[RMDB]
Conditions: 150 mM KOAc, 10 mM MgCl2 and 150 mM bicine (pH 8.5), 24 C.
The record gives the reactivity of an RNA of 177 nucleotides to DMS and 2A3.
For DMS, 2,605 sequencing reads were counted.
For DMS the reverse transcriptase was MarathonRT.
High 2A3 reactivity points to a flexible backbone, as in loops and unpaired stretches.
For 2A3 the reverse transcriptase was SuperScript II with manganese.
RNA sequence: GGGAACGACUCGAGUAGAGUCGAAAAGACACGACGGAGACGUCGUGUCAAAGAGUGGGAAACCACUCAAAGAGCCACAGCUUCGGCUGUGGCUCAAGGCGCGGCAUAGUCCGCGGAACAAACUAAACAUACUACGGUGAUUCGUCACCGUAGUAUGAAAAGAAACAACAACAACAAC
Reactivity to DMS in 0.01 (KOAc 150mM, MgCl2 10mM, bicine 150mM(pH8.5), 24C), signal-to-noise 3, nucleotides 027 to 126: g000a010c000a010c000g010a040c000g000g000a270g000a270c010g010u000c000g020u000g000u010c010a010a050a130g000a010g030u000g000g010g000a140a110a220c000c010a010c000u010c010a030a070a100g020a020g020c030c000a010c000a000g020c000u000u010c300g030g030c000u010g020u000g000g020c000u000c000a010a080g000g000c020g020c000g000g000c010a160u000a100g000u010c000c000g020c010g000g000a040a080c150a050a050a060c060u000a060a110a200
Reactivity to 2A3 in 0.01 (KOAc 150mM, MgCl2 10mM, bicine 150mM(pH8.5), 24C), signal-to-noise 2, nucleotides 027 to 126: g010a000c010a000c000g020a000c010g000g030a070g030a060c010g010u010c000g000u000g000u000c000a000a000a010g000a010g010u010g010g000g000a020a050a080c010c000a010c000u010c000a020a040a000g010a000g030c010c000a010c010a000g030c010u100u130c300g090g020c010u020g010u000g020g000c010u000c000a000a000g000g000c010g010c000g000g030c050a110u180a140g060u110c000c000g020c000g010g010a010a010c030a080a070a010c070u170a120a010a030